[RMDB]
RNA sequence: GGGAACGACUCGAGUAGAGUCGAAAAUAUCUAUGACAAACCCACAGUCAAUAUCAUACUGAAUGGGCAAAAACUGGAAGCAUUCCCUUUGAAAACUGGCACAAGACAGGGAUGCCCUCUCUCACCAGUCGAAGACUAUUUUCGAAUAGUCUUCGACAAAAGAAACAACAACAACAAC
Reactivity to 2A3 in 0.01 (KOAc 150mM, MgCl2 10mM, bicine 150mM(pH8.5), 24C), signal-to-noise 3, nucleotides 027 to 126: u060a010u000c020u030a180u150g040a040c070a040a110a030c030c020c000a010c000a010g020u000c020a060a120u110a120u300c120a090u090a220c020u040g100a240a160u040g020g000g000c030a030a040a000a050a110c060u060g000g020a060a010g060c000a010u040u150c000c000c000u080u060u060g130a100a110a010a020c050u040g080g020c080a030c020a150a050g080a050c020a040g050g000g030a010u050g010c000c000c000u000c000u000c010u020c000a060c020c020a050
Reactivity to DMS in 0.01 (KOAc 150mM, MgCl2 10mM, bicine 150mM(pH8.5), 24C), signal-to-noise 3, nucleotides 027 to 126: u020a040u000c020u000a040u010g010a070c060a070a150a180c030c010c020a060c040a050g010u000c100a080a100u020a130u010c130a110u010a050c010u010g020a060a090u010g030g020g010c070a080a050a090a100a040c100u000g000g000a030a110g020c060a070u000u000c010c000c020u000u000u010g010a050a070a070a090c110u010g000g000c050a100c100a050a070g040a090c090a030g000g000g000a080u010g000c030c030c030u000c060u000c030u000c050a090c140c110a120